[RMDB]
RNA sequence: GGGAACGACUCGAGUAGAGUCGAAAAUUAUACCCGCCUAUCAUUCAGACCCUUUAUGGAACUGUCAUUCAACCCCAAAAAUCUAGUGCAAAUAUUGUCUUAAUUACUUAGGCUAAAAGAAAUAAGUUAUACAAUACACUCUUCGGAGUGUAUUGAAGAUAUCCUCUUGAUUCGUCAAGAGGAUAUCAAAAGAAACAACAACAACAAC
Reactivity to 2A3 in 0.01 (KOAc 150mM, MgCl2 10mM, bicine 150mM(pH8.5), 24C), signal-to-noise 1, nucleotides 027 to 156: u140u010a030u040a080c050c000c000g030c000c000u100a150u260c020a080u060u050c040a010g030a080c050c030c070u030u150u210a060u090g020g000a010a060c010u090g050u060c020a030u060u150c060a050a170c030c000c000c010a040a090a040a040a090u060c060u090a040g010u010g100c000a010a080a120u060a060u210u060g010u000c010u000u040a090a080u050u050a040c020u010u040a030g010g000c010u030a030a000a130a000g050a040a170a030u100a180a000g000u060u050a090u050a140c000a000a000u000a010c000a000c000u000c000u100u120c170g050g000a000g000u000g010u000a010u000u000g000a010a000
Reactivity to DMS in 0.01 (KOAc 150mM, MgCl2 10mM, bicine 150mM(pH8.5), 24C), signal-to-noise 1, nucleotides 027 to 156: u000u020a180u000a120c000c000c060g030c110c030u000a020u000c070a110u000u040c080a160g000a140c000c010c020u000u000u000a110u000g010g000a080a060c060u000g010u000c070a080u000u000c040a040a210c060c000c000c030a040a130a100a090a120u010c070u010a110g030u000g010c060a120a090a100u000a010u010u000g000u040c000u010u000a050a030u000u010a100c080u000u020a000g050g050c090u000a010a050a080a110g020a070a060a110u010a040a090g010u000u000a130u000a160c050a040a010u000a020c000a010c000u000c000u000u010c270g000g000a040g040u000g010u000a000u000u000g000a010a060